The data come from the RNA Mapping Database (RMDB), library OK2TST. This 177-nucleotide RNA was probed chemically with 2A3 and DMS.

[RMDB]
RNA sequence: GGGAACGACUCGAGUAGAGUCGAAAAUGAGUACAUAACGGUUACAUCAUGUACUAGAUACUUGGCCUGUUGAUUCAUUGAGCCAGUAUACUCAAGGUGGAUGGCAAAGCUUUCCUUAAAACUAGCACAUAGGUAUAUAUUUCGAUAUAUACCUAUGAAAAGAAACAACAACAACAAC
Reactivity to 2A3 in 0.01 (KOAc 150mM, MgCl2 10mM, bicine 150mM(pH8.5), 24C), signal-to-noise 7, nucleotides 027 to 126: u090g010a010g010u010a010c010a030u060a140a080c070g100g050u120u120a050c020a070u110c010a000u070g000u010a020c010u010a030g030a090u050a050c030u080u100g020g010c000c010u060g040u100u110g110a170u160u080c060a030u040u080g020a020g020c020c000a000g020u020a040u040a040c040u050c030a030a020g070g010u030g030g050a040u030g010g000c000a060a030a030g010c050u020u040u020c000c000u050u050a060a160a070a100c060u040a050g090c100a010
Reactivity to DMS in 0.01 (KOAc 150mM, MgCl2 10mM, bicine 150mM(pH8.5), 24C), signal-to-noise 9, nucleotides 027 to 126: u010g010a030g010u000a010c010a020u000a090a130c130g010g010u010u010a090c090a130u000c090a030u000g010u000a010c020u000a060g010a130u000a050c050u000u010g020g010c010c020u000g010u010u000g010a120u010u000c050a140u000u000g000a070g010c030c050a100g020u000a070u000a090c030u000c050a040a050g010g020u000g010g010a060u000g000g010c020a030a050a080g010c080u000u000u000c010c010u000u010a040a060a070a090c130u000a090g010c170a200

The reactions ran in a buffer of 150 mM KOAc, 10 mM MgCl2 and 150 mM bicine (pH 8.5), at 24 C.